[RMDB]
RNA sequence: GGGAACGACUCGAGUAGAGUCGAAAAGUUCGUACUCUCGAGAACUCACGAGAUCGAGAACGAGAGUGAGUUCGAACGAUCACGAACACGAGUUCUCUCUCGUUCGUUCACGAGUUCGAACUCGAUCGUGAGAGUACUCACACGUACACUCGUGAACACUUACUACAUGGUUCGCCAUGUAGUAAGUAAAAGAAACAACAACAACAAC
Reactivity to 2A3 in 0.01 (KOAc 150mM, MgCl2 10mM, bicine 150mM(pH8.5), 24C), signal-to-noise 9, nucleotides 027 to 156: g040u050u050c030g010u030a060c020u010c010u030c020g070a060g010a100a030c030u020c030a020c020g050a050g010a090u090c060g010a030g030a130a030c020g010a010g000a010g050u070g010a020g010u020u040c030g020a070a030c040g030a100u140c070a030c140g050a070a010c040a020c080g020a030g020u080u030c050u000c010u000c000u000c050g010u090u040c040g010u030u020c030a010c040g010a020g010u060u110c030g010a020a010c010u000c010g010a040u030c010g010u030g020a020g000a020g040u060a090c010u030c030a040c010a010c060g040u080a040c040a010c040u010c000g010u020g000a030a010c030
Reactivity to DMS in 0.01 (KOAc 150mM, MgCl2 10mM, bicine 150mM(pH8.5), 24C), signal-to-noise 4, nucleotides 027 to 156: g030u010u000c020g010u000a090c040u000c010u010c010g030a130g020a070a100c070u000c010a080c030g010a080g030a110u000c040g020a120g010a080a070c010g000a080g010a130g030u000g000a050g020u010u000c020g000a070a100c050g000a200u000c080a140c060g020a060a060c050a170c050g000a060g020u000u000c100u000c060u000c000u010c020g030u000u000c000g020u000u000c040a080c050g000a110g030u000u000c040g000a040a110c010u010c010g000a050u000c010g020u010g030a050g010a180g030u000a090c020u010c030a130c070a080c080g000u000a090c060a120c030u010c020g000u000g000a060a150c120